Structure probing data (2A3 and DMS) for a 177-nucleotide construct. DMS (dimethyl sulfate) methylates the pairing face of unpaired adenines and cytosines. DMS adducts were read by reverse transcription with MarathonRT. The 2A3 profile rests on 545 reads. Reactivities are given for positions 27 through 126.
[RMDB]
RNA sequence: GGGAACGACUCGAGUAGAGUCGAAAAUGUAUAAUUGGUAUGAAUUGUUCCGCCUGAAUAGACGUUCGCGACGAGCACGUUUAGCGGCGUCAGAUUAUCGUACGUGACACCGAUCCAGUCGUGGGCAUCUUAAGAGGAGCUUCGGCUCCUCUUAAGAAAAAGAAACAACAACAACAAC
Reactivity to 2A3 in 0.01 (KOAc 150mM, MgCl2 10mM, bicine 150mM(pH8.5), 24C), signal-to-noise 1, nucleotides 027 to 126: u060g080u020a130u020a100a140u080u110g050g010u140a050u160g040a170a070u120u130g070u070u030c090c000g050c010c000u070g020a150a030u080a140g020a030c000g140u110u170c050g200c030g000a060c010g070a130g170c090a060c070g000u010u020u080a010g030c060g000g030c010g000u000c000a000g050a210u040u170a050u230c060g020u120a130c030g020u070g060a020c020a010c060c050g020a020u000c060c000a070g050u000c000g060u070g060g000g000c050a000
Reactivity to DMS in 0.01 (KOAc 150mM, MgCl2 10mM, bicine 150mM(pH8.5), 24C), signal-to-noise 3, nucleotides 027 to 126: u000g000u010a050u000a100a110u010u010g000g020u010a070u000g030a080a090u000u010g010u010u000c070c050g000c080c030u000g010a090a090u000a100g010a020c050g000u000u020c090g020c000g010a060c050g010a260g020c150a060c030g000u000u000u000a100g020c060g000g030c020g010u000c040a040g000a120u000u000a060u000c080g010u010a030c090g000u000g000a050c080a030c050c030g010a090u010c060c060a100g010u000c040g020u000g010g010g010c060a100